[RMDB]
RNA sequence: GGGAACGACUCGAGUAGAGUCGAAAAUUUCCACCUGACAUGUAAUGGAAAGAGAAGGGUAUAUGAAUAUAAACAUAAACAUAUAUGUUUAUAUUUAAAUCUUGGUUAGGUACAGUUGAAAUUCUGUUAUUGGUGUAAAACUUUAUAAUAGGUCAACUACGUUAUAAAGCUUCGGCUUUAUAACGUAAAAAGAAACAACAACAACAAC
Reactivity to 2A3 in 0.01 (KOAc 150mM, MgCl2 10mM, bicine 150mM(pH8.5), 24C), signal-to-noise 1, nucleotides 027 to 156: u020u000u000c000c000a020c000c010u020g020a020c030a130u140g010u170a180a090u210g090g100a070a070a020g030a010g030a040a060g110g000g000u070a140u000a030u150g000a000a000u010a000u000a000a000a000c000a010u030a140a220a040c020a000u300a120u120a040u260g000u000u000u000a000u000a000u000u000u010a070a100a030u000c010u030u050g010g020u000u060a000g000g000u030a050c050a040g020u000u010g060a040a080a110u150u010c020u000g000u010u000a020u020u030g050g000u050g000u070a100a220a030a010c040u000u250u050a030u020a000a130u060a050g070g040u040c000a000a030c020